An RNA of 207 nucleotides, treated with 2A3 and read out base by base.
The data come from the RNA Mapping Database (RMDB), library OK3TST.
Values cover nucleotides 27 to 156.
The RNA was probed in 150 mM KOAc, 10 mM MgCl2 and 150 mM bicine (pH 8.5) at 24 C.
RNA sequence: GGGAACGACUCGAGUAGAGUCGAAAACACGAUCUUUGCUUUCGUCCAAGAUCCUCGAUGAAAGCAAAGAUGGUGUACUAAAAUAAUGAAGACGACAACGACAACGACGAUAAUUACGAUUGUGACGAUAGUUACAAUUUUAGUACAUCAUCUUUGCGACCAUCUCGCCGUUCGCGGCGAGAUGGUCAAAAGAAACAACAACAACAAC
Reactivity to 2A3 in 0.01 (KOAc 150mM, MgCl2 10mM, bicine 150mM(pH8.5), 24C), signal-to-noise 1, nucleotides 027 to 156: c040a030c080g030a020u060c040u070u080u080g000c000u170u060u070c080g060u000c030c010a030a000g000a070u050c110c080u190c120g080a130u200g100a110a030a000g000c000a000a000a000g000a020u000g000g000u000g000u000a010c000u040a000a010a010a000u230a080a070u150g160a160a130g110a040c090g060a010c000a190a000c070g100a000c040a090a000c000g070a020c010g020a160u110a300a090u230u150a140c080g260a260u040u010g030u010g110a070c090g100a120u040a130g030u000u030a040c060a030a000u000u000u000u000a040g000u030a010c000a000u000c000a000u000c000u030u040u040g000c030
Source information:
The 2A3 profile rests on 570 reads. Values are in units of 0.01, from 0 to 300, in steps of 10.